Chemical mapping of a 177-nucleotide RNA with 2A3 and DMS. For 2A3 the reverse transcriptase was SuperScript II with manganese. It was measured as part of the RMDB libraries RFM100 and RFMREP.

RNA sequence: GGGAACGACUCGAGUAGAGUCGAAAAUGCAUAAAUCUAACUCCUACCAUCAGCGACACACUGCUUGACACAUAUUGCGAGAAGCACCUCGCAUUUGCGGGUUCUCUUAAGCAAAAUACUUGCAUUAGCAUUGUAGAUUAUUCGUAAUCUACAAUGCAAAAGAAACAACAACAACAAC
Reactivity to 2A3 in 0.01 (KOAc 150mM, MgCl2 10mM, bicine 150mM(pH8.5), 24C), signal-to-noise 9, nucleotides 027 to 126: u110g000c030a050u090a110a140a050u090c070u080a030a090c030u030c020c010u020a070c020c010a060u060c020a010g030c010g070a020c010a010c000a010c120u040g010c020u030u090g040a020c020a000c010a100u080a060u150u090g000c000g000a010g010a090a020g030c040a050c020c000u090c020g000c010a040u040u020u170g010c030g010g020g000u040u010c020u000c000u050u090a070a020g000c020a020a020a050a040u170a100c050u040u050g020c010a100u070u090a020
Reactivity to DMS in 0.01 (KOAc 150mM, MgCl2 10mM, bicine 150mM(pH8.5), 24C), signal-to-noise 8, nucleotides 027 to 126: u010g010c060a060u000a050a080a080u020c060u010a100a160c090u010c020c010u000a090c080c030a060u010c050a050g000c050g010a060c110a060c110a050c080u010g010c040u000u000g010a100c080a060c090a060u010a040u010u010g010c010g010a060g010a090a100g010c180a060c130c000u010c020g010c000a140u000u000u000g010c030g000g000g000u000u000c010u010c040u010u010a060a120g010c040a020a030a070a080u010a060c150u000u000g010c030a070u010u010a150

Overview: Conditions: 150 mM KOAc, 10 mM MgCl2 and 150 mM bicine (pH 8.5), 24 C. Reactivities are given for positions 27 through 126.